[RMDB]
RNA sequence: GGGAACGACUCGAGUAGAGUCGAAAAACGUUCAUGUGCGACAUGAACUCAGUGCAUACUGUCCAACAGUAUGCAAACGGCUUCUGUUGGACAGAGGCCAGAGUUAAUCUGUUGCACAGAUUAGCGAGGACAGCUUAGUAUUCGUACUAAGCUGUCCAAAAGAAACAACAACAACAAC
Reactivity to DMS in 0.01 (KOAc 150mM, MgCl2 10mM, bicine 150mM(pH8.5), 24C), signal-to-noise 1, nucleotides 027 to 126: a030c030g000u000u000c090a110u000g000u000g000c000g030a010c000a010u010g000a000a010c000u000c030a100g010u010g000c000a010u000a050c010u000g000u000c100c130a000a020c010a000g000u000a000u000g010c030a000a030a030c270g000g000c000u000u000c000u000g000u030u000g000g010a210c010a000g000a020g010g000c000c020a220g000a030g010u020u000a020a040u000c080u000g000u000u000g010c010a060c000a010g000a060u000u000a080g010c000g010a210